Structure probing data (2A3 and DMS) for a 177-nucleotide construct. It was measured as part of the RMDB library OK1LIB. For 2A3 the reverse transcriptase was SuperScript II with manganese. Reactivities are given for positions 27 through 126.

RNA sequence: GGGAACGACUCGAGUAGAGUCGAAAAGCGCAUCACGAUGCAGCGAUGUUAGGAUGAGGCGGUGCGCACUACCAUCGACCUGCCGCAAGACCUGCACAAGCAGGCACUGGCGAUUGCCCGGGAUACGGGCUCAAUCUGAUUUCGAUCAGAUUGAGCCAAAAGAAACAACAACAACAAC
Reactivity to 2A3 in 0.01 (KOAc 150mM, MgCl2 10mM, bicine 150mM(pH8.5), 24C), signal-to-noise 8, nucleotides 027 to 126: g020c010g000c010a020u040c040a020c080g070a060u130g030c020a020g030c030g070a050u070g050u120u140a100g120g050a130u140g080a050g020g070c030g000g010u050g020c040g000c010a020c040u080a050c010c020a040u040c010g070a130c030c010u040g000c010c010g010c030a030a040g030a130c000c010u020g010c030a080c040a200a070g000c010a000g000g030c010a040c060u040g020g000c010g030a050u030u160g030c000c000c000g040g000g010a070u110a210c080g020
Reactivity to DMS in 0.01 (KOAc 150mM, MgCl2 10mM, bicine 150mM(pH8.5), 24C), signal-to-noise 4, nucleotides 027 to 126: g010c020g040c010a020u000c060a090c110g010a100u010g010c000a050g000c050g000a090u000g000u000u020a070g020g010a060u040g000a150g010g000c070g000g020u000g020c010g000c130a150c060u000a080c070c040a050u000c040g000a080c060c000u010g000c000c020g000c070a050a060g010a300c050c020u000g000c000a170c290a070a140g000c020a010g010g010c040a010c050u010g000g000c030g000a050u020u030g000c020c020c010g000g010g000a130u060a080c080g000